[RMDB]
RNA sequence: GGGAACGACUCGAGUAGAGUCGAAAACUAUCCGUCUUCGGACGGAUAGAAAGAAUAAAAGAGCCAAUAAUACGGGUAAAAGGCUCAAAAUACCCGAAUAAUAAACAAAGCAGUUCGCUGCUUUGAACAAAGAAUUACAGUUCGCUGUAAUUCUUUGAAAAGAAACAACAACAACAAC
Reactivity to DMS in 0.01 (KOAc 150mM, MgCl2 10mM, bicine 150mM(pH8.5), 24C), signal-to-noise 3, nucleotides 027 to 126: c000u000a010u000c010c000g030u010c000u000u000c220g050g010a020c000g010g010a000u000a000g000a030a070a140g000a160a110u000a080a100a100a110g000a020g010c030c000a030a080u000a120a140u010a200c160g000g000g020u000a080a100a110a220g000g000c030u000c030a020a030a060a070u000a090c010c000c010g010a090a070u010a050a120u010a100a120a170c010a000a000a020g010c000a020g010u000u040c210g010c000u000g010c000u000u000u000g000a070a110
Reactivity to 2A3 in 0.01 (KOAc 150mM, MgCl2 10mM, bicine 150mM(pH8.5), 24C), signal-to-noise 2, nucleotides 027 to 126: c000u000a000u000c000c010g000u020c000u020u040c070g120g000a010c010g020g010a000u000a000g000a000a000a000g010a040a030u180a070a130a020a030g020a000g010c010c030a000a000u130a110a030u120a090c030g030g000g000u010a010a070a060a130g040g000c000u000c020a000a010a040a070u060a000c000c000c010g020a010a030u160a190a040u080a000a090a010c010a000a020a000g000c000a010g020u040u120c180g020c120u000g020c000u000u000u000g000a020a010